[RMDB]
RNA sequence: GGGAACGACUCGAGUAGAGUCGAAAAUUAAUCAUGAAAACAGUGAGGGGGAAAAGUAACAUGUUUUUAACACAUAAUCACAAUUGUGUUUUAUAUGAAGAACUCUUAUUGGAAUGCUGUGUAGUUCCCCAAUAUUGUGGUUCAGUGGAACAAGAUACUAAAAUGCAUGAUUCGUCAUGCAUUUUAGAAAAGAAACAACAACAACAAC
Reactivity to DMS in 0.01 (KOAc 150mM, MgCl2 10mM, bicine 150mM(pH8.5), 24C), signal-to-noise 3, nucleotides 027 to 156: u010u000a080a130u020c040a060u000g020a090a110a100a100c020a050g000u010g020a080g030g030g000g050g000a070a070a180a110g010u010a050a130c060a050u000g020u000u000u000u000u000a030a140c010a020c020a050u000a040a060u010c110a110c100a100a210u000u010g040u000g000u000u000u000u000a050u000a050u020g010a100a110g000a070a060c020u010c030u000u000a100u000u000g020g000a100a070u010g000c040u000g020u000g030u000a100g030u000u000c000c000c000c040a020a090u000a050u000u010g020u000g020g020u000u000c050a100g010u000g020g010a040a090c090a050a070g000a130u000a180
Reactivity to 2A3 in 0.01 (KOAc 150mM, MgCl2 10mM, bicine 150mM(pH8.5), 24C), signal-to-noise 3, nucleotides 027 to 156: u080u060a050a060u100c010a030u050g080a030a040a010a030c010a010g030u050g120a100g000g030g010g020g030a070a070a030a000g090u060a070a040c020a020u040g030u040u080u010u030u030a010a000c020a000c000a000u060a080a070u180c050a010c040a130a110u070u020g010u000g000u000u000u040u060a070u030a050u100g080a060a070g010a050a010c010u000c020u110u040a050u000u020g030g030a070a080u140g000c030u000g030u010g010u060a010g030u030u010c010c000c000c020a000a030u070a050u070u070g020u050g060g000u010u050c060a030g040u070g040g010a030a020c010a110a020g100a090u130a030